[RMDB]
RNA sequence: GGGAACGACUCGAGUAGAGUCGAAAACGGUUACGCCUGCUUUACCGUUAUCAAGGAAGGUACUCGGCCAUGCUAAGGGAAGCAUUAUUCCUUAGGCGCAUGUCGCCGCCAGCAUGGUGUGAGGGGAAAAAGUAUGCUGGGUUCGCCCAGCAUACAAUCGUAUGAUUUUCUUCGGAAAAUCAUACGAAAAAGAAACAACAACAACAAC
Reactivity to 2A3 in 0.01 (KOAc 150mM, MgCl2 10mM, bicine 150mM(pH8.5), 24C), signal-to-noise 5, nucleotides 027 to 156: c020g010g030u060u040a040c080g060c040c030u080g010c060u090u080u070a020c020c000g110u070u100a090u150c070a040a030g100g020a040a040g030g020u080a050c010u000c050g010g000c000c000a010u000g000c000u090a070a060g020g000g010a010a000g000c090a210u140u100a130u130u180c010c000u040u070a070g010g000c000g010c070a150u240g120u300c020g010c020c000g020c020c010a000g000c000a000u020g010g000u050g110u100g030a030g020g010g000g040a000a040a050a020a060g000u000a000u010g010c000u010g000g020g000u020u010c060g070c040c010c000a000g000c000a000u000a000c000a000a020
Reactivity to DMS in 0.01 (KOAc 150mM, MgCl2 10mM, bicine 150mM(pH8.5), 24C), signal-to-noise 3, nucleotides 027 to 156: c010g000g010u000u000a020c070g000c030c030u000g000c010u000u000u000a020c000c010g050u000u000a050u000c090a030a070g000g000a090a040g010g020u010a090c030u000c020g040g000c000c020a040u000g010c000u000a180a160g010g010g010a020a080g030c180a200u000u010a170u000u010c000c010u000u000a060g030g030c020g020c050a110u010g040u000c010g040c010c010g000c080c100a050g030c000a040u000g030g030u000g000u000g000a040g000g010g000g000a040a080a100a120a170g000u000a010u000g020c000u010g000g000g010u000u000c300g040c010c010c010a000g010c010a000u000a000c010a040a060
Structure probing data (2A3 and DMS) for a 207-nucleotide construct. For DMS the reverse transcriptase was MarathonRT. For 2A3 the reverse transcriptase was SuperScript II with manganese. In probing experiments dimethyl sulfate is read out at A N1 and C N3, which are open when not base-paired. The 2A3 profile rests on 4,535 reads. The RNA was probed in 150 mM KOAc, 10 mM MgCl2 and 150 mM bicine (pH 8.5) at 24 C. The data come from the RNA Mapping Database (RMDB), library M2RFPK. For DMS, 6,830 sequencing reads were counted.